[RMDB]
RNA sequence: GGGAACGACUCGAGUAGAGUCGAAAAGCAGAUUCACUCUGCACCUGGCUGCAGCUCCAGUCUGGUGCUUUUUCCAUCUGCCAAAGAAACAGUCCAGAAUGCUGUGGCUUCCUCUGCCUAUCAGAGGGUAUGAUUCAUCCUUCGGGAUGAAUCAUACAAAAGAAACAACAACAACAAC
Reactivity to 2A3 in 0.01 (KOAc 150mM, MgCl2 10mM, bicine 150mM(pH8.5), 24C), signal-to-noise 2, nucleotides 027 to 126: g000c000a010g010a030u260u270c070a030c170u030c000u000g000c000a040c000c010u000g030g000c010u020g000c020a040g000c000u020c110c000a060g110u000c020u020g020g000u110g010c000u020u010u010u010u000c040c010a090u040c080u190g150c040c040a040a080a040g000a010a020a010c020a020g010u000c000c000a020g030a070a040u080g000c010u010g010u020g000g030c030u100u050c000c000u000c000u010g010c040c050u150a120u250c010a000g000a000g020g020
Reactivity to DMS in 0.01 (KOAc 150mM, MgCl2 10mM, bicine 150mM(pH8.5), 24C), signal-to-noise 2, nucleotides 027 to 126: g000c010a010g000a060u000u010c220a160c200u000c010u000g000c000a100c010c030u000g010g030c010u000g010c030a020g010c090u000c210c130a120g000u020c010u000g010g000u010g000c000u000u000u020u000u000c020c100a150u000c080u010g020c100c270a020a140a120g000a010a030a060c040a040g000u000c020c020a030g000a040a090u020g010c010u000g000u000g000g010c020u010u000c010c000u000c010u000g010c190c130u000a170u000c040a010g010a020g000g000